[RMDB]
RNA sequence: GGGAACGACUCGAGUAGAGUCGAAAAUCGAGGACAUUUUCUGCAUAACAUUUACCCCUGUGCCUUUAUAGAUUCUCCUGAAUUUAGAUCAACUCAGAUGCACAAAGGUGAAAAAUUCCAGGUCACCCUACACGGAAACCUUCGGGUUUCCGUGUAGAAAAGAAACAACAACAACAAC
Reactivity to DMS in 0.01 (KOAc 150mM, MgCl2 10mM, bicine 150mM(pH8.5), 24C), signal-to-noise 1, nucleotides 027 to 126: u000c050g010a000g050g000a080c140a040u080u000u030u000c060u010g000c050a020u010a100a210c090a120u010u010u030a130c040c000c000c040u000g000u020g050c020c000u000u120u000a020u020a080g040a060u000u050c040u050c030c100u030g000a050a040u000u020u060a090g000a060u070c180a010a030c100u000c020a070g010a070u020g000c000a000c140a030a010a030g000g020u010g000a000a000a140a070a170u010u030c030c000a030g000g000u000c070a030c020c000
Reactivity to 2A3 in 0.01 (KOAc 150mM, MgCl2 10mM, bicine 150mM(pH8.5), 24C), signal-to-noise 3, nucleotides 027 to 126: u110c030g020a030g010g030a040c050a060u060u070u000u000c020u090g080c030a060u090a210a150c040a070u050u030u160a040c030c000c000c030u030g040u040g000c030c010u030u040u010a150u040a010g040a050u100u000c040u040c050c030u060g040a050a070u060u110u120a060g020a080u020c020a000a020c030u020c060a030g020a070u160g050c050a040c000a040a060a020g000g000u040g040a000a000a110a020a000u110u010c030c010a010g060g040u000c000a030c000c000
This 177-nucleotide RNA was probed chemically with DMS and 2A3. Conditions: 150 mM KOAc, 10 mM MgCl2 and 150 mM bicine (pH 8.5), 24 C. For DMS the reverse transcriptase was MarathonRT. DMS (dimethyl sulfate) methylates the pairing face of unpaired adenines and cytosines. Values cover nucleotides 27 to 126.